This 177-nucleotide RNA was probed chemically with 2A3. The 2A3 profile rests on 970 reads. Values cover nucleotides 27 to 126. It was measured as part of the RMDB library OK1LIB.

RNA sequence: GGGAACGACUCGAGUAGAGUCGAAAAGAGGCAACGAGUGCGCCUCAAGGUAGGUACUCCGGAAUCUACCAGUACUCGAUAAGAUCUCGGAAUGCCACAUAGAGAUCAGGUAUUCCAACCGGAGAAAGGGAACGAAGAUGUUCGCAUCUUCGUUCCCAAAAGAAACAACAACAACAAC
Reactivity to 2A3 in 0.01 (KOAc 150mM, MgCl2 10mM, bicine 150mM(pH8.5), 24C), signal-to-noise 2, nucleotides 027 to 126: g000a000g000g010c010a300a070c120g080a000g000u050g000c000g000c000c000u030c040a000a040g020g000u000a000g020g030u030a180c000u000c000c000g000g000a070a010u000c000u000a000c000c000a000g010u000a000c000u000c020g080a070u160a260a100g070a060u090c120u030c140g000g000a100a050u050g020c000c000a050c030a070u160a060g130a000g000a100u130c040a000g000g000u030a010u110u000c000c010a020a050c000c010g000g020a000g000a000a040a000